[RMDB]
RNA sequence: GGGAACGACUCGAGUAGAGUCGAAAACCCCCGUUCGCGGGGGGGGAAUCCUAAGUCCCAUACUAUCUCCGUUGUCAGAUUACAUUCGGAAACGAAUGCGAUCUUGGAUUUACGGAGACGAAUAUGGGAUAUGGAACACAUGGGGAUUCGUCCCCAAUUAAUGUACUUUGUUCGCAAAGUACAUUAAAAAAGAAACAACAACAACAAC
Reactivity to DMS in 0.01 (KOAc 150mM, MgCl2 10mM, bicine 150mM(pH8.5), 24C), signal-to-noise 2, nucleotides 027 to 156: c020c000c000c010c010g030u000u000c170g040c060g020g000g010g020g000g000g000g000a130a100u020c000c020u000a090a300g010u000c000c000c000a030u010a010c040u000a110u010c000u000c010c010g040u030u000g000u000c000a050g000a020u010u000a030c010a010u000u010c020g030g020a160a120a300c000g010a020a010u000g020c000g030a010u000c000u010u000g030g020a050u000u010u000a020c000g020g000a010g020a020c040g030a030a030u000a000u000g010g020g010a010u000a040u000g000g000a040a110c030a050c100a190u010g000g010g010g000a060u010u000c080g010u000c000c000c000c000a010a020
Reactivity to 2A3 in 0.01 (KOAc 150mM, MgCl2 10mM, bicine 150mM(pH8.5), 24C), signal-to-noise 3, nucleotides 027 to 156: c020c000c010c000c000g020u070u060c300g000c040g040g010g000g010g030g000g020g060a030a080u030c010c000u010a070a010g040u000c000c000c010a000u010a020c060u040a050u030c010u000c000c000g000u010u000g020u020c010a000g000a020u010u010a040c000a000u000u000c000g050g030a100a110a030c020g000a000a000u000g010c020g010a000u010c000u000u100g110g000a020u190u150u140a000c000g010g000a000g000a000c010g040a150a160u010a000u000g000g000g010a000u010a010u030g020g020a090a050c060a000c010a230u080g000g000g010g020a010u040u080c130g080u070c040c000c000c040a000a000